The record gives the reactivity of an RNA of 177 nucleotides to 2A3 and DMS. High DMS reactivity at an A or C suggests that its Watson-Crick edge is free. The RNA was probed in 150 mM KOAc, 10 mM MgCl2 and 150 mM bicine (pH 8.5) at 24 C. Values cover nucleotides 27 to 126. For 2A3, 3,576 sequencing reads were counted.
[RMDB]
RNA sequence: GGGAACGACUCGAGUAGAGUCGAAAAAUUCUUCAGUUUGAUAAUGUUAAGAUCUACCGUUUCAAAAGCUUCUCUCAAAAUUUGUCGUCACUUUCACAGAGAAUCUAUUCCUUACGAUAAGACGAUCCAUAGUAUCCCUGUUCGCAGGGAUACUAUGAAAAGAAACAACAACAACAAC
Reactivity to 2A3 in 0.01 (KOAc 150mM, MgCl2 10mM, bicine 150mM(pH8.5), 24C), signal-to-noise 7, nucleotides 027 to 126: a000u090u020c030u150u100c040a110g070u030u150u150g100a090u090a190a080u120g070u170u080a120a040g010a080u000c020u050a070c040c040g030u020u060u060c110a100a090a030a010g000c050u070u030c020u000c000u020c060a060a090a110a230u100u140u120g040u020c020g010u020c000a020c110u020u110u080c050a030c020a050g110a010g060a090a040u020c020u070a070u060u070c020c020u050u070a050c060g040a060u030a150a040g020a010c040g010a010u020c040
Reactivity to DMS in 0.01 (KOAc 150mM, MgCl2 10mM, bicine 150mM(pH8.5), 24C), signal-to-noise 4, nucleotides 027 to 126: a150u000u000c040u000u010c040a100g010u030u010u000g010a040u040a080a060u020g000u000u040a060a100g010a100u000c030u000a070c090c040g010u000u020u020c060a130a090a080a070g000c090u010u010c040u000c040u020c090a070a080a070a070u020u020u000g000u000c030g000u010c010a070c080u010u020u000c050a070c120a070g000a060g000a110a030u000c080u020a080u000u010c040c050u000u040a070c160g000a020u010a070a100g020a040c040g000a050u020c150